RNA sequence: GGGAACGACUCGAGUAGAGUCGAAAACGCCCGAUCGCUGUACCAGGACACAGCCGUGGCCGCGCUGCGCGACGACCUGGCCCUGGCGCUGUGCGCGGCGGCGCACCAUGGCCUGGGCGAAGGCGUACCUCCUAGGAGCAUUCGUGCUCCUAGGAGGAAAAGAAACAACAACAACAAC
Reactivity to 2A3 in 0.01 (KOAc 150mM, MgCl2 10mM, bicine 150mM(pH8.5), 24C), signal-to-noise 2, nucleotides 027 to 126: c040g020c040c000c000g060a130u050c000g000c050u080g090u200a120c000c000a010g030g020a020c010a000c010a140g090c040c000g020u010g100g020c020c040g020c030g000c050u080g030c080g010c030g030a060c010g080a110c030c060u090g080g010c010c080c010u100g030g000c040g000c050u100g080u090g050c030g000c020g050g000c010g010g050c000g000c010a010c050c020a040u020g010g000c020c010u010g000g000g000c000g030a050a050g010g010c020g000u070a130
Reactivity to DMS in 0.01 (KOAc 150mM, MgCl2 10mM, bicine 150mM(pH8.5), 24C), signal-to-noise 1, nucleotides 027 to 126: c140g000c000c020c060g030a090u000c050g000c010u030g000u000a300c070c000a040g000g000a030c100a050c150a040g020c230c050g010u000g000g000c110c000g030c000g020c020u000g010c000g030c010g000a100c040g010a090c020c020u000g010g010c010c060c060u000g000g010c000g000c000u040g000u010g060c000g010c020g000g000c050g000g010c000g010c040a080c100c090a110u000g000g000c000c000u000g000g020g010c050g000a060a220g000g010c010g010u000a120
Chemical mapping of a 177-nucleotide RNA with 2A3 and DMS.
DMS adducts were read by reverse transcription with MarathonRT.
Reactivities are rounded to 0.1 and cut off at 0 and 3.
The reactions ran in a buffer of 150 mM KOAc, 10 mM MgCl2 and 150 mM bicine (pH 8.5), at 24 C.
The data come from the RNA Mapping Database (RMDB), library OK2TST.